[RMDB]
RNA sequence: GGGAACGACUCGAGUAGAGUCGAAAAGGAUCGCAGCACGAUCCGUACACGUACCAUGAGACGAUCCGCGAUCUGCUAGCGUCAUGCGUCAUGGAUCUACCAUGCUAGGGUACGACAUGUCUAGACGCGCUUUGCGUAUGUUCGCAUACGCAAAGCGAAAAGAAACAACAACAACAAC
Reactivity to 2A3 in 0.01 (KOAc 150mM, MgCl2 10mM, bicine 150mM(pH8.5), 24C), signal-to-noise 3, nucleotides 027 to 126: g010g010a010u020c030g000c110a080g070c050a070c100g000a020u000c000c020g010u010a030c080a010c050g020u000a050c010c060a100u190g010a110g030a120c070g000a010u030c010c030g140c030g080a050u010c080u150g010c040u020a060g040c030g050u070c020a050u110g000c030g000u070c000a020u000g030g000a040u020c020u050a020c020c020a070u180g090c090u180a100g240g050g040u030a010c060g030a030c030a080u170g050u040c060u060a050g000a040c020g000
Reactivity to DMS in 0.01 (KOAc 150mM, MgCl2 10mM, bicine 150mM(pH8.5), 24C), signal-to-noise 3, nucleotides 027 to 126: g000g000a010u000c020g020c100a170g000c130a300c030g010a010u000c020c000g050u000a070c190a110c040g010u010a060c100c070a080u000g000a170g020a080c130g000a060u000c020c030g030c070g010a070u010c130u010g040c050u010a090g020c020g010u000c060a100u000g000c050g010u000c000a050u000g000g000a160u010c030u000a150c080c010a040u020g010c160u020a150g030g010g010u000a030c040g000a080c090a030u000g010u010c070u010a150g000a030c020g000